[RMDB]
This 177-nucleotide RNA was probed chemically with DMS and 2A3. The RNA was probed in 150 mM KOAc, 10 mM MgCl2 and 150 mM bicine (pH 8.5) at 24 C. For 2A3 the reverse transcriptase was SuperScript II with manganese.

RNA sequence: GGGAACGACUCGAGUAGAGUCGAAAAUCACACGGGCAUACCGUGGCGAUGACCGGCGACGGCGUCAACGACGUGCUUGCCCUCAAGGACGCUGAUAUCGGUGUGGCGAUGGGCUCGGGCAGCCCGGGCUGCCAGCAUAGUUCGCUAUGCUGGCAGCAAAAGAAACAACAACAACAAC
Reactivity to DMS in 0.01 (KOAc 150mM, MgCl2 10mM, bicine 150mM(pH8.5), 24C), signal-to-noise 4, nucleotides 027 to 126: u000c040a080c030a030c030g000g000g000c300a100u010a130c030c000g020u000g000g000c130g000a050u000g000a150c040c030g010g000c150g020a130c040g000g000c010g000u000c020a130a130c140g000a050c060g030u010g020c050u000u000g000c040c020c040u000c070a090a160g000g010a040c030g020c050u000g000a100u010a100u000c050g010g010u010g030u000g010g000c070g010a100u010g010g010g000c030u010c040g000g010g020c100a210g010c010c010c010g000g010
Reactivity to 2A3 in 0.01 (KOAc 150mM, MgCl2 10mM, bicine 150mM(pH8.5), 24C), signal-to-noise 3, nucleotides 027 to 126: u060c010a000c000a010c050g000g030g010c090a110u140a280c010c000g000u020g000g000c080g020a020u060g100a100c020c000g030g020c040g030a050c020g010g000c000g020u000c020a080a050c080g110a030c060g040u100g040c040u050u100g030c010c030c010u030c030a030a050g130g000a010c050g000c030u050g060a100u040a050u220c050g030g010u040g020u070g100g050c010g020a040u090g010g080g010c040u020c030g050g040g000c060a050g010c000c020c010g020g140